[RMDB]
RNA sequence: GGGAACGACUCGAGUAGAGUCGAAAAUUUCUACGGUGAUGCCUUCGAAGAGUCAGUGUUCUCUGCAGCUAUCUCUGGGGCGGGCACUAGUAUGGUCUUUGAGAAUGACUUUUCCGAGUUUGACAGCCCGAUAUUCAGUAUUCGUACUGAAUAUCGGAAAAGAAACAACAACAACAAC
Reactivity to DMS in 0.01 (KOAc 150mM, MgCl2 10mM, bicine 150mM(pH8.5), 24C), signal-to-noise 6, nucleotides 027 to 126: u000u010u000c020u010a080c100g000g020u000g010a080u000g000c030c030u000u000c130g000a080a060g010a040g020u000c060a100g010u000g000u000u000c040u000c040u010g000c080a090g010c100u000a060u010c060u000c030u000g010g000g010g020c070g010g000g000c050a030c040u000a060g010u000a060u010g010g010u000c020u010u000u010g010a160g000a100a080u010g000a030c020u000u010u000u000c010c020g000a060g000u000u000u010g020a140c130a120g000c130
Reactivity to 2A3 in 0.01 (KOAc 150mM, MgCl2 10mM, bicine 150mM(pH8.5), 24C), signal-to-noise 3, nucleotides 027 to 126: u030u030u010c020u050a050c040g040g020u050g030a070u080g030c020c010u050u110c060g060a100a080g000a030g040u050c040a030g020u020g090u180u020c040u010c000u060g030c030a060g000c020u100a050u140c050u000c010u090g040g010g000g000c040g020g030g000c020a020c030u020a040g050u060a090u170g050g000u030c050u040u090u100g040a060g020a060a050u130g020a010c000u010u030u020u000c030c000g010a060g050u030u060u110g080a040c000a010g020c010
The record gives the reactivity of an RNA of 177 nucleotides to DMS and 2A3.
For 2A3 the reverse transcriptase was SuperScript II with manganese.
The reactions ran in a buffer of 150 mM KOAc, 10 mM MgCl2 and 150 mM bicine (pH 8.5), at 24 C.
The data come from the RNA Mapping Database (RMDB), library OK2TRN.
For DMS the reverse transcriptase was MarathonRT.